Structure probing data (DMS and 2A3) for a 177-nucleotide construct. The data come from the RNA Mapping Database (RMDB), library OK1LIB. DMS adducts were read by reverse transcription with MarathonRT. The 2A3 profile rests on 1,514 reads.
[RMDB]
RNA sequence: GGGAACGACUCGAGUAGAGUCGAAAAGGAGCCCACUACUAUAUGAACAACCAUAUGGAGAUGAUCGCCAAGUACAAGGGCGAACCGUGGCGCAAGCCGGACUAUCCGUAUGGCGAGGGCGUUAUCGUACUCGCUAGGACUUCGGUCCUAGCGAGUAAAAAGAAACAACAACAACAAC
Reactivity to DMS in 0.01 (KOAc 150mM, MgCl2 10mM, bicine 150mM(pH8.5), 24C), signal-to-noise 4, nucleotides 027 to 126: g020g010a280g000c000c000c010a230c150u010a080c090u010a060u020a010u050g020a130a100c240a150a170c030c000a010u000a000u000g010g000a010g000a280u010g000a150u010c000g020c010c000a020a070g020u060a150c300a150a060g000g000g000c010g000a010a090c080c050g010u090g010g030c020g040c300a140a100g010c000c000g000g000a270c110u000a120u000c000c000g000u000a010u020g020g010c030g000a060g000g010g000c040g010u020u020a050u030c080g020
Reactivity to 2A3 in 0.01 (KOAc 150mM, MgCl2 10mM, bicine 150mM(pH8.5), 24C), signal-to-noise 3, nucleotides 027 to 126: g130g040a030g040c020c020c040a050c010u070a050c020u010a020u060a090u300g060a160a030c040a030a030c030c000a000u010a000u000g000g000a070g010a020u230g050a100u140c020g010c020c000a070a010g090u180a260c050a090a050g210g010g000c010g000a010a020c000c040g120u190g060g000c020g030c080a000a070g000c000c000g000g030a010c010u020a040u110c010c000g020u000a000u000g000g010c000g000a210g000g000g060c020g010u020u090a100u160c060g010